RNA sequence: GGGAACGACUCGAGUAGAGUCGAAAAUACCACAAGAAUGUGGCGCUCCGCGGUUGGUGAGCAUGCUCGGUCCGUCCGAGAAGCCUUAAAACUGCGACGACACAUUCACCUUGAACCAAGGCGUGUAGAUAUUCUAGCUGUUCGCAGCUAGAAUAUCAAAAGAAACAACAACAACAAC
Reactivity to DMS in 0.01 (KOAc 150mM, MgCl2 10mM, bicine 150mM(pH8.5), 24C), signal-to-noise 3, nucleotides 027 to 126: u000a210c060c010a090c180a130a130g010a030a010u000g030u010g000g000c010g010c020u000c020c010g010c020g010g000u000u000g020g020u020g010a110g030c000a030u000g010c010u000c000g000g000u010c190c300g000u000c020c000g010a020g000a010a020g010c000c000u010u000a100a080a020a020c000u000g000c000g010a120c000g010a030c000a000c000a010u000u000c000a220c060c020u000u000g010a090a150c230c090a040a030g010g010c300g010u010g000u000a120
Reactivity to 2A3 in 0.01 (KOAc 150mM, MgCl2 10mM, bicine 150mM(pH8.5), 24C), signal-to-noise 4, nucleotides 027 to 126: u100a010c020c010a020c020a050a070g010a010a010u000g000u000g000g010c020g040c080u120c130c030g000c020g020g020u020u020g050g080u080g030a090g000c020a040u250g000c000u000c010g010g030u010c080c170g100u070c000c000g040a000g000a000a000g010c000c000u140u210a050a100a030a020c010u010g000c000g200a290c000g000a000c040a000c000a020u010u000c000a010c000c000u030u060g090a130a080c090c010a050a010g050g000c080g060u120g070u120a030

Chemical mapping of a 177-nucleotide RNA with DMS and 2A3. For DMS, 2,155 sequencing reads were counted. For 2A3 the reverse transcriptase was SuperScript II with manganese. It was measured as part of the RMDB library RFMREP. The RNA was probed in 150 mM KOAc, 10 mM MgCl2 and 150 mM bicine (pH 8.5) at 24 C.